Source: RMDB library OK3TST, as collected in RNAgym. This 207-nucleotide RNA was probed chemically with DMS and 2A3. The 2A3 profile rests on 2,444 reads. The reactions ran in a buffer of 150 mM KOAc, 10 mM MgCl2 and 150 mM bicine (pH 8.5), at 24 C. DMS adducts were read by reverse transcription with MarathonRT.
[RMDB]
RNA sequence: GGGAACGACUCGAGUAGAGUCGAAAACUGUGUAAACCCCAAAUAGCUGAAACUAUGUCCUAAUAGCAUUGAGCUUGGUGUGCCACAUCCUUAGCAAUAACCACUUGAGUGUCUGUCCCUGGGGCCUGCAGAUGAGGAUGUUAACAUCUGAUUUAGCGUUCGUAGUUGAAUUCGUUCAACUACGAACAAAAGAAACAACAACAACAAC
Reactivity to DMS in 0.01 (KOAc 150mM, MgCl2 10mM, bicine 150mM(pH8.5), 24C), signal-to-noise 2, nucleotides 027 to 156: c070u010g000u000g030u000a080a090a100c020c000c000c000a080a120a100u010a050g010c030u020g000a140a110a090c050u000a000u010g010u000c100c090u000a110a110u000a080g010c010a140u000u010g040a090g030c030u000u000g020g020u010g060u000g000c060c060a030c040a030u000c030c010u000u000a070g040c010a110a070u000a070a110c020c020a040c000u000u020g000a050g000u010g020u010c040u000g000u000c010c030c020u010g000g010g020g020c030c010u010g000c050a080g010a050u000g020a180g000g010a070u010g000u010u010a070a120c010a040u000c010u000g000a140u020u010u000a120g020c140
Reactivity to 2A3 in 0.01 (KOAc 150mM, MgCl2 10mM, bicine 150mM(pH8.5), 24C), signal-to-noise 4, nucleotides 027 to 156: c020u030g000u010g050u220a080a130a140c000c010c010c020a010a060a070u130a060g040c030u060g050a100a050a050c060u050a060u060g100u100c020c030u120a140a110u070a110g020c070a080u020u110g050a010g000c000u040u030g040g000u040g020u030g050c040c010a020c000a060u030c010c020u050u080a010g010c010a050a180u070a140a060c030c030a070c080u030u060g020a020g060u040g050u040c040u110g060u040c040c000c000u010g010g000g010g000c000c020u040g000c000a010g010a100u060g000a030g040g010a030u050g040u090u110a010a010c010a020u010c010u030g080a090u100u060u170a110g040c050